The record gives the reactivity of an RNA of 177 nucleotides to DMS and 2A3. The reactions ran in a buffer of 150 mM KOAc, 10 mM MgCl2 and 150 mM bicine (pH 8.5), at 24 C. Reactivities are given for positions 27 through 126. Source: RMDB library M2PK50, as collected in RNAgym. DMS adducts were read by reverse transcription with MarathonRT.
RNA sequence: GGGAACGACUCGAGUAGAGUCGAAAAGGUUCCGUCUUCGGACGGAACCAAACAUAGUAUACCCUGUUGCAUGUAUACUAUGAUAUACCGUAAUGCAUCGGAAAAUGCCUAGUUUCGACUAGGCAAAGGUAAUUAUCGGGUUCGCCCGAUAAUUACCAAAAGAAACAACAACAACAAC
Reactivity to DMS in 0.01 (KOAc 150mM, MgCl2 10mM, bicine 150mM(pH8.5), 24C), signal-to-noise 1, nucleotides 027 to 126: g010g020u000u000c000c000g000u000c000u000u030c150g050g000a020c000g020g040a000a000c020c020a050a010a050c000a000u010a000g030u000a000u010a000c000c200c130u000g020u010u010g000c020a140u000g010u000a000u000a000c000u000a000u000g000a070u000a090u000a100c000c050g000u020a060a040u000g000c000a010u000c010g020g000a080a050a150a120u000g010c000c000u000a000g010u010u000u010c170g020a010c010u010a020g010g000c000a000a000a060
Reactivity to 2A3 in 0.01 (KOAc 150mM, MgCl2 10mM, bicine 150mM(pH8.5), 24C), signal-to-noise 1, nucleotides 027 to 126: g030g000u010u010c000c000g010u010c000u030u030c130g080g000a000c000g000g000a000a020c000c010a000a000a000c010a000u010a000g000u010a000u000a000c030c030c060u120g060u070u030g030c040a040u050g000u010a010u000a000c000u020a010u000g040a020u020a020u010a030c030c000g030u070a110a040u060g000c030a020u020c060g100g080a150a100a010a080u030g000c010c010u010a000g010u050u130u010c230g060a030c010u000a000g070g000c000a010a010a000